[RMDB]
Source: RMDB library M2PK50, as collected in RNAgym. The record gives the reactivity of an RNA of 177 nucleotides to DMS and 2A3. In probing experiments dimethyl sulfate is read out at A N1 and C N3, which are open when not base-paired. As a SHAPE reagent, 2A3 marks flexible, mostly unpaired nucleotides at the ribose 2'-OH.
RNA sequence: GGGAACGACUCGAGUAGAGUCGAAAACGGUCGAAAUUCGUUUCGACCGAAUAUGCUAGCUGAGCACAGCUGCAAUGCUAAGCUGAAAGCCAGCUGCAAGCGCGAGUUCGGCGUUCGCGCCGAACAACAUGGGUGGGGUGUUCGCACCCCACCCAUGAAAAGAAACAACAACAACAAC
Reactivity to DMS in 0.01 (KOAc 150mM, MgCl2 10mM, bicine 150mM(pH8.5), 24C), signal-to-noise 1, nucleotides 027 to 126: c010g010g020u010c010g010a010a010a030u000u010c160g030u000u000u010c000g000a000c020c010g000a050a000u000a050u010g020c010u000a040g010c000u000g010a130g010c000a160c000a020g000c000u000g020c110a080a130u000g000c140u000a070a010g000c010u000g010a080a100a110g000c000c000a000g060c010u000g000c030a060a040g030c170g010c140g020a080g040u010u000c000g000g000c000g000u000u000c140g020c050g030c010c000g020a010a020c010a060a090
Reactivity to 2A3 in 0.01 (KOAc 150mM, MgCl2 10mM, bicine 150mM(pH8.5), 24C), signal-to-noise 1, nucleotides 027 to 126: c010g010g000u000c000g010a000a010a060u170u130c250g060u030u000u000c000g020a000c010c000g000a000a030u130a030u040g010c080u090a030g000c000u000g020a010g020c000a000c000a270g000c020u000g000c050a170a110u130g010c010u020a120a020g000c010u000g000a140a020a010g020c010c000a010g000c030u040g020c020a060a000g070c020g010c030g110a070g010u000u000c000g030g000c000g000u050u040c180g030c000g020c100c000g010a000a000c000a000a000